[RMDB]
RNA sequence: GGGAACGACUCGAGUAGAGUCGAAAACAACUCCUGUGACUGUCCCCUUCCUGUAGCAAAAGAACCCCCAUCUCAGAGUCCCAACACUCCCCUGCAGCGUCUGGUGGAGGGUUAUGGUCCAGCUGGGCGACUUGGUUACUUUCGAGUAACCAAGUCGAAAAGAAACAACAACAACAAC
Reactivity to DMS in 0.01 (KOAc 150mM, MgCl2 10mM, bicine 150mM(pH8.5), 24C), signal-to-noise 1, nucleotides 027 to 126: c110a090a140c150u000c000c000u000g030u010g000a090c050u000g010u000c070c000c020c050u000u000c020c030u030g030u000a090g010c090a070a010a150a170g010a110a210c040c010c010c000c040a120u030c020u000c040a080g000a150g010u020c020c010c090a050a060c030a030c060u000c000c000c000c040u000g000c040a220g050c150g020u000c010u000g010g020u000g040g000a040g020g010g010u000u000a050u000g030g010u000c040c080a130g010c040u010g000g000g010